The record gives the reactivity of an RNA of 207 nucleotides to DMS.
The reactions ran in a buffer of 150 mM KOAc, 10 mM MgCl2 and 150 mM bicine (pH 8.5), at 24 C.
It was measured as part of the RMDB library RNAMAK.
For DMS, 3,282 sequencing reads were counted.
RNA sequence: GGGAACGACUCGAGUAGAGUCGAAAAUAGGGUUCGCCCUAUAAGGCGGGGUCCUACCUAGUACGUCUAUGAAGGCAAGGCCUGAAGCCUCCACGGGCUGAUGACCUGGAGACGGACCGGUAGGACGGAGGCACCCCCAAACAACGUUCGCGUUGAACAUAAAGUUCGGAUUCGUCCGAACUUUAUGAAAAGAAACAACAACAACAAC
Reactivity to DMS in 0.01 (KOAc 150mM, MgCl2 10mM, bicine 150mM(pH8.5), 24C), signal-to-noise 2, nucleotides 027 to 156: u000a030g030g050g040u000u010c200g010c020c000c040u000a040u010a030a100g000g020c090g050g040g010g020u000c000c010u010a010c000c010u010a030g000u030a050c000g030u000c000u000a180u010g030a060a060g010g000c040a140a290g000g020c010c020u000g000a110a170g050c040c020u000c000c140a300c150g020g010g050c020u020g010a190u000g020a280c000c000u000g000g030a090g020a010c000g000g010a030c070c030g010g020u000a050g000g000a000c000g010g010a000g020g030c000a080c000c010c000c010c030a170a090a200c040a070a040c060g010u010u010c150g030c140g020u010u010g020a120a300